Source: RMDB library RSTRND, as collected in RNAgym.
This 207-nucleotide RNA was probed chemically with 2A3.
RNA sequence: GGGAACGACUCGAGUAGAGUCGAAAACAGCGCGACUACGCCCUCGCUGCCUGAUCAGCGACGGCUAGCUGUCGGCCCGGGUUGUGUUCCCGAACCCGGAUGCCGGCAUCAUCUCAGGGAACUCACCGUGUUCGCCGGUCGCGGACGGACACGGGACGAAAUGUGGGUGGUUCGCCACCCACAUUUCAAAAGAAACAACAACAACAAC
Reactivity to 2A3 in 0.01 (KOAc 150mM, MgCl2 10mM, bicine 150mM(pH8.5), 24C), signal-to-noise 2, nucleotides 027 to 156: c040a070g080c040g010c010g190a140c050u050a020c100g000c000c000c000u010c000g000c000u040g020c020c240u220g040a230u180c040a000g020c000g000a000c000g000g000c000u030a020g010c020u020g000u010c000g000g000c000c000c000g000g000g000u020u020g090u010g010u050u000c010c000c000g000a010a010c000c000c000g030g010a030u190g010c010c000g010g020c030a040u200c000a020u070c080u090c030a040g000g000g040a010a000c020u040c090a060c020c030g010u010g000u000u000c000g020c010c000g050g110u070c110g040c090g200g060a090c000g020g000a000c000a000c010g000g000g000a020c040